[RMDB]
RNA sequence: GGGAACGACUCGAGUAGAGUCGAAAAGAAGAGAGCGUAGCACACAGUCAGACUGUACGACAGUCUGACACACACCUACGCUAGUGCAUCGUGUGUGUGAUAUCGAUGUUGCACGAAGAUGAGGAAAGCAUCAAACGCUGUUCGCAGCGUUUGAUGCAAAAGAAACAACAACAACAAC
Reactivity to DMS in 0.01 (KOAc 150mM, MgCl2 10mM, bicine 150mM(pH8.5), 24C), signal-to-noise 1, nucleotides 027 to 126: g020a080a100g000a130g020a080g020c000g020u010a000g020c040a080c090a100c180a020g050u000c010a000g000a040c000u000g010u000a150c290g000a130c020a000g000u000c000u000g000a000c020a020c030a020c060a100c180c010u000a000c000g030c000u000a050g010u000g000c000a020u000c020g020u000g060u020g040u000g000u000g000a100u000a100u000c110g000a020u040g000u000u000g020c010a050c020g000a070a200g000a030u000g040a040g000g000a100a030a150
Reactivity to 2A3 in 0.01 (KOAc 150mM, MgCl2 10mM, bicine 150mM(pH8.5), 24C), signal-to-noise 1, nucleotides 027 to 126: g180a060a000g120a010g010a000g000c000g010u000a010g000c220a010c030a000c000a030g070u000c000a000g010a010c010u010g000u090a110c140g060a030c190a000g000u000c000u000g000a000c000a000c000a000c000a000c000c010u010a000c000g000c010u060a010g090u040g040c020a020u010c030g040u030g000u030g010u010g020u000g100a020u010a010u200c120g050a100u200g050u110u040g000c000a040c050g030a150a060g030a010u070g040a050g040g070a110a050a000
Structure probing data (DMS and 2A3) for a 177-nucleotide construct.
Values cover nucleotides 27 to 126.
The reactions ran in a buffer of 150 mM KOAc, 10 mM MgCl2 and 150 mM bicine (pH 8.5), at 24 C.
DMS adducts were read by reverse transcription with MarathonRT.
The 2A3 profile rests on 1,177 reads.
2A3 is a SHAPE reagent: it acylates the 2'-hydroxyl of flexible nucleotides of all four kinds.
For DMS, 653 sequencing reads were counted.
For 2A3 the reverse transcriptase was SuperScript II with manganese.